Description: Chemical mapping of a 177-nucleotide RNA with DMS and 2A3. The 2A3 profile rests on 1,231 reads.
RNA sequence: GGGAACGACUCGAGUAGAGUCGAAAAACAAAGGAGGCCCGGAUACCUAUAUAUAGCUUUUCAUACCGGCGCGCGCGCGCUGGCUGGCCUCCGCAUUGAAUAGAGUAGGUACCCGCGCGCGAAAAAAGCUAAGUAUACUGUUCGCAGUAUACUUAGCAAAAGAAACAACAACAACAAC
Reactivity to DMS in 0.01 (KOAc 150mM, MgCl2 10mM, bicine 150mM(pH8.5), 24C), signal-to-noise 1, nucleotides 027 to 126: a160c070a010a040a090g010g010a020g020g010c010c030c300g000g000a040u000a010c010c000u000a050u000a110u010a090u000a060g020c080u000u000u000u000c040a060u000a180c030c000g000g000c090g030c030g040c030g000c030g040c010g010c040u010g020g010c090u000g000g020c010c000u000c020c000g000c140a040u010u010g010a070a070u000a070g010a080g010u010a000g020g010u000a040c030c030c030g020c000g000c020g010c020g020a020a040a070a070a020a070
Reactivity to 2A3 in 0.01 (KOAc 150mM, MgCl2 10mM, bicine 150mM(pH8.5), 24C), signal-to-noise 1, nucleotides 027 to 126: a000c030a000a060a040g010g000a030g000g020c040c020c050g000g010a030u060a020c000c020u010a020u000a010u020a020u070a260g120c060u220u060u100u200c040a060u100a170c010c030g040g000c050g020c000g000c020g000c000g000c010g000c090u030g000g050c020u010g000g000c000c010u040c000c000g010c000a080u110u170g040a020a090u060a140g040a030g060u060a000g010g000u020a040c010c000c010g000c010g020c000g020c010g000a170a000a000a000a000a000
The reactions ran in a buffer of 150 mM KOAc, 10 mM MgCl2 and 150 mM bicine (pH 8.5), at 24 C. The DMS profile rests on 932 reads.